[RMDB]
RNA sequence: GGGAACGACUCGAGUAGAGUCGAAAAGAUAUGGAAAGUUGAGCUUUGAUGACCCAUGAGAUAGCUGAAAUAUAUCGGAAACGAUAUAUUUCCGAAACAUGGCAAGAAGCUCACCUUUCCUAAGUCACUUGUAGUGUUAGUUCGCUAACACUACAAGAAAAGAAACAACAACAACAAC
Reactivity to DMS in 0.01 (KOAc 150mM, MgCl2 10mM, bicine 150mM(pH8.5), 24C), signal-to-noise 4, nucleotides 027 to 126: g010a020u000a020u020g010g010a020a010a020g010u010u000g000a010g010c000u000u010u000g010a040u030g010a030c300c010c000a000u000g010a150g000a210u010a110g020c220u000g000a010a010a000u000a010u000a010u000c000g010g000a000a000a030c000g020a000u010a010u010a000u000u000u000c010c080g010a180a160a140c010a000u000g010g010c010a050a010g010a000a010g010c010u010c000a000c040c010u000u000u000c000c000u000a000a060g000u000c000a280
Reactivity to 2A3 in 0.01 (KOAc 150mM, MgCl2 10mM, bicine 150mM(pH8.5), 24C), signal-to-noise 4, nucleotides 027 to 126: g010a000u000a010u040g000g020a000a000a000g010u020u000g000a000g010c010u100u090u050g180a300u200g000a080c020c010c010a010u020g040a120g110a210u300a130g250c220u090g020a000a000a000u000a000u000a010u000c000g030g000a020a020a000c000g000a010u000a000u000a000u010u000u030c000c020g050a020a030a020c010a010u000g010g000c020a300a300g020a000a000g010c000u000c010a000c000c000u000u010u000c000c000u000a020a000g000u000c010a020
Structure probing data (DMS and 2A3) for a 177-nucleotide construct. Reactivities are given for positions 27 through 126. The data come from the RNA Mapping Database (RMDB), library TTRINS. For DMS the reverse transcriptase was MarathonRT. The reactions ran in a buffer of 150 mM KOAc, 10 mM MgCl2 and 150 mM bicine (pH 8.5), at 24 C. For 2A3, 10,338 sequencing reads were counted.